An RNA of 177 nucleotides, treated with 2A3 and DMS and read out base by base. The 2A3 profile rests on 4,036 reads. 2A3 adducts were read by reverse transcription with SuperScript II with manganese. For DMS the reverse transcriptase was MarathonRT. The DMS profile rests on 1,190 reads.
RNA sequence: GGGAACGACUCGAGUAGAGUCGAAAAGCAUACAACUUCGGUUGUAUGCAACGACAGAGAUGACUGUCAUAAACAACGUAACAUGUGAGUUACAAUAACACAUUGCAGCAGCUUUCGAGCUGCUGAAGAACUCUAUGGCAUUCGUGCCAUAGAGUUCAAAAGAAACAACAACAACAAC
Reactivity to 2A3 in 0.01 (KOAc 150mM, MgCl2 10mM, bicine 150mM(pH8.5), 24C), signal-to-noise 4, nucleotides 027 to 126: g000c000a000u000a000c000a000a000c010u060u090c200g140g000u000u000g000u000a000u010g000c010a000a010c030g000a000c010a010g030a010g060a060u140g120a190c000u010g000u010c010a010u150a010a090a020c060a010a060c110g010u030a020a010c030a050u170g130u070g280a120g050u050u040a010c000a000a030u160a070a020c080a000c030a110u070u290g030c010a010g000c000a000g000c010u000u070u150c150g020a000g000c000u010g000c000u000g000a010a000
Reactivity to DMS in 0.01 (KOAc 150mM, MgCl2 10mM, bicine 150mM(pH8.5), 24C), signal-to-noise 2, nucleotides 027 to 126: g000c000a000u000a000c000a010a020c000u000u010c220g010g000u000u000g000u000a020u010g010c020a070a080c130g000a010c010a010g020a140g060a050u010g030a160c000u000g010u000c000a120u010a060a140a110c110a080a100c160g010u000a020a050c030a160u010g020u010g030a130g010u000u000a030c040a180a050u010a050a060c120a080c130a080u000u010g000c000a010g050c000a000g020c010u010u010u000c220g000a010g000c000u000g020c000u000g000a010a140